[RMDB]
RNA sequence: GGGAACGACUCGAGUAGAGUCGAAAAGAUAUGGAUCUUCUAGUUGGCUUCCCAGCUAAGGAACUACAGAGUGCAUCGGAAACGAUGCCCUCUGCCUUAGCUGGGAAGCCAAGGAAGAUCCUAAGUCCGAUGAUAAGAUGUUCGCAUCUUAUCAUCGAAAAGAAACAACAACAACAAC
Reactivity to DMS in 0.01 (KOAc 150mM, MgCl2 10mM, bicine 150mM(pH8.5), 24C), signal-to-noise 3, nucleotides 027 to 126: g000a120u010a300u020g010g000a010u000c010u000u000c000u000a160g020u000u000g000g010c010u000u000c000c000c000a000g010c000u000a010a000g000g000a120a030c100u030a300c000a000g000a020g000u000g000c000a010u000c000g020g010a180a120a200c000g010a020u000g010c000c080c000u000c000u010g000c000c010u000u000a010g010c000u000g000g000g010a000a000g000c000c000a000a000g020g000a020a010g000a000u000c000c000u000a020a070g010u000c050
This 177-nucleotide RNA was probed chemically with DMS. For DMS, 5,504 sequencing reads were counted. For DMS the reverse transcriptase was MarathonRT.